Chemical mapping of a 177-nucleotide RNA with DMS and 2A3. Reactivities are rounded to 0.1 and cut off at 0 and 3. The 2A3 profile rests on 16,669 reads. For DMS, 19,245 sequencing reads were counted.
RNA sequence: GGGAACGACUCGAGUAGAGUCGAAAACGGCCGCCCAUACAUCGGAGCCUGGCGACCUAAACGGUCGUGUCAUAUGUAAGCACCAGGUGCCAUCUCCGAGUGGAAUACGGCCGGGCACCGCGAUGGGUCAUCCGUUCCGCUUCGGUGGGACGGAUGAAAAAGAAACAACAACAACAAC
Reactivity to DMS in 0.01 (KOAc 150mM, MgCl2 10mM, bicine 150mM(pH8.5), 24C), signal-to-noise 7, nucleotides 027 to 126: c040g000g010c000c010g020c110c010c040a070u030a300c120a090u010c000g010g020a030g020c190c150u010g000g000c010g000a030c000c010u000a090a120a110c220g000g000u000c040g010u010g000u030c120a090u030a120u030g020u030a110a140g010c060a110c020c030a070g010g020u030g010c020c050a060u050c000u000c010c010g010a030g020u010g000g000a150a040u020a150c030g000g000c020c000g010g000g010c080a110c000c000g000c160g000a070u020g000g030g020
Reactivity to 2A3 in 0.01 (KOAc 150mM, MgCl2 10mM, bicine 150mM(pH8.5), 24C), signal-to-noise 9, nucleotides 027 to 126: c000g000g000c010c000g020c010c000c000a030u070a090c060a110u020c000g010g000a010g010c000c030u010g020g000c040g080a070c000c010u110a200a180a070c120g010g010u040c050g020u030g050u040c040a060u140a080u300g180u190a100a060g040c020a020c010c010a020g060g000u030g060c040c020a070u060c010u000c010c000g000a010g030u020g000g020a050a040u110a100c000g000g000c000c000g000g010g000c050a030c000c010g020c030g090a110u140g050g030g020